[RMDB]
RNA sequence: GGGAACGACUCGAGUAGAGUCGAAAACACCACGCCUGUGCCUAGCCCCUGGGGCCAGGUUUCCACUUUCUGCCCAGCGUGACUCCUGCAGGAAAGGACUGUACAAGACUUGGGUGCCACCUUCAGAGCCAUUACGUUUAUUCGUAAACGUAAUGGCAAAAGAAACAACAACAACAAC
Reactivity to DMS in 0.01 (KOAc 150mM, MgCl2 10mM, bicine 150mM(pH8.5), 24C), signal-to-noise 4, nucleotides 027 to 126: c130a190c060c010a130c220g010c010c010u000g000u020g030c020c000u010a130g000c060c010c000c010u000g020g010g000g010c010c010a020g020g010u000u000u010c040c040a120c120u000u000u020c060u000g000c070c020c050a110g000c120g020u010g010a090c050u010c040c030u000g020c050a060g010g000a050a070a080g000g000a060c080u000g010u010a070c080a100a070g020a070c050u000u010g000g000g000u000g010c020c050a070c060c050u000u000c070a080g010a280
Reactivity to 2A3 in 0.01 (KOAc 150mM, MgCl2 10mM, bicine 150mM(pH8.5), 24C), signal-to-noise 1, nucleotides 027 to 126: c050a010c000c030a040c040g010c030c010u040g100u220g040c000c010u050a060g030c000c000c040c000u000g050g000g000g000c020c010a010g040g000u000u050u010c010c000a010c000u050u090u020c010u040g020c040c000c010a040g000c060g060u060g060a040c010u030c020c010u070g040c020a010g000g130a040a060a060g030g030a040c030u040g040u090a030c040a160a060g010a040c030u050u080g020g010g040u010g050c010c010a060c020c000u040u140c070a040g020a010